[RMDB]
RNA sequence: GGGAACGACUCGAGUAGAGUCGAAAAGGUAGGGAGUCCACGGAGAAGAUGCAGUGAAUGCUUGCAUGCAUUCACACGUGUGUGUGUCCCAGCUAGUUCACUCCUUUCGCCGUGCGUGGUGGAGGCUGGCCUCUCUGGCUGGGUGCAGUGAAUGGCCGCUACUACUUACGUUCGCGUAAGUAGUAGCAAAAGAAACAACAACAACAAC
Reactivity to 2A3 in 0.01 (KOAc 150mM, MgCl2 10mM, bicine 150mM(pH8.5), 24C), signal-to-noise 5, nucleotides 027 to 156: g120g000u100a050g030g020g020a040g020u000c040c010a010c040g040g030a060g030a060a040g070a080u150g040c110a050g000u010g010a020a010u050g020c030u110u200g050c080a060u180g010c000a010u020u020c010a010c030a020c060g060u090g010u040g020u010g000u010g030u070c000c020c000a000g000c020u040a000g040u070u060c030a010c070u050c020c000u050u090u170c060g020c010c020g080u160g130c080g060u160g050g020u020g020g010a000g020g060c070u040g030g020c000c010u060c000u020c040u050g030g000c020u020g010g070g030u040g000c040a040g020u030g050a070a040u070g020g010c030c050
Reactivity to DMS in 0.01 (KOAc 150mM, MgCl2 10mM, bicine 150mM(pH8.5), 24C), signal-to-noise 1, nucleotides 027 to 156: g000g030u000a040g020g000g000a120g030u000c020c050a070c060g000g010a090g020a040a070g000a070u010g020c070a140g050u000g000a030a010u000g010c040u000u000g050c190a140u000g040c000a000u000u000c020a000c010a010c110g020u000g030u000g010u010g040u010g030u000c010c000c010a050g040c010u000a050g060u000u000c040a060c010u010c020c010u000u000u000c040g030c000c030g020u010g000c170g070u000g030g010u000g030g010a060g020g000c010u000g020g000c030c030u000c080u010c040u000g010g040c000u000g010g000g030u020g000c030a010g000u000g000a050a070u010g030g050c060c080